[RMDB]
RNA sequence: GGGAACGACUCGAGUAGAGUCGAAAAUGGGCAACACAGUGAGACCUCAUCUCUACAAAAAAUUUAAAAAUUAGCUGGGUGUAGUGGUGUGCACGUGUAGUCCCAGCUACUUGGUGGGGCUGAAGUGGGACGAUGGCUUGAGCCCACGGGGUCAAGACGUAAUCCUGAUGUUCGCAUCAGGAUUACGAAAAGAAACAACAACAACAAC
Reactivity to 2A3 in 0.01 (KOAc 150mM, MgCl2 10mM, bicine 150mM(pH8.5), 24C), signal-to-noise 1, nucleotides 027 to 156: u030g000g010g010c040a110a020c100a030c030a050g000u060g070a120g030a040c050c010u020c000a050u010c060u010c030u120a090c080a080a120a030a000a000a010u120u210u250a160a160a080a120a030u080u070a030g020c030u060g000g060g000u060g010u090a050g000u010g030g020u110g100u160g030c000a000c040g060u070g050u100a000g090u150c020c030c000a020g000c000u030a010c000u020u180g080g030u110g000g000g030g000c030u050g050a090a050g000u080g030g010g020a030c030g050a020u110g050g010c070u030u200g010a040g000c000c000c000a000c010g030g000g000g000u030c020a010a000g080a000

An RNA of 207 nucleotides, treated with 2A3 and read out base by base. High 2A3 reactivity points to a flexible backbone, as in loops and unpaired stretches. Values cover nucleotides 27 to 156.